[RMDB]
RNA sequence: GGGAACGACUCGAGUAGAGUCGAAAAUUCAGAAAUUUCUGAUUAGGAUUUAUUUUUGAUUUUGAGAGAGAAAAUAGCAGCGUAUAUUUAUGUGUCAAGCUGCAAGCGCUUAUUAUACGAUGACACAAUACGGAGUGGAGUUCGCUCCACUCCGUAUAAAAGAAACAACAACAACAAC
Reactivity to 2A3 in 0.01 (KOAc 150mM, MgCl2 10mM, bicine 150mM(pH8.5), 24C), signal-to-noise 1, nucleotides 027 to 126: u080u020c000a000g050a000a050a000u210u140u070c100u070g200a300u000u260a010g030g000a050u040u230u050a050u040u020u070u000u000g010a040u000u050u050u090g090a170g040a000g040a000g120a050a300a000a000u140a050g000c000a000g000c010g090u030a030u000a030u210u300u040a170u210g000u000g030u010c040a040a000g000c000u010g050c010a000a050g030c030g000c080u200u000a130u030u080a090u200a070c080g090a080u160g000a000c000a000c000a000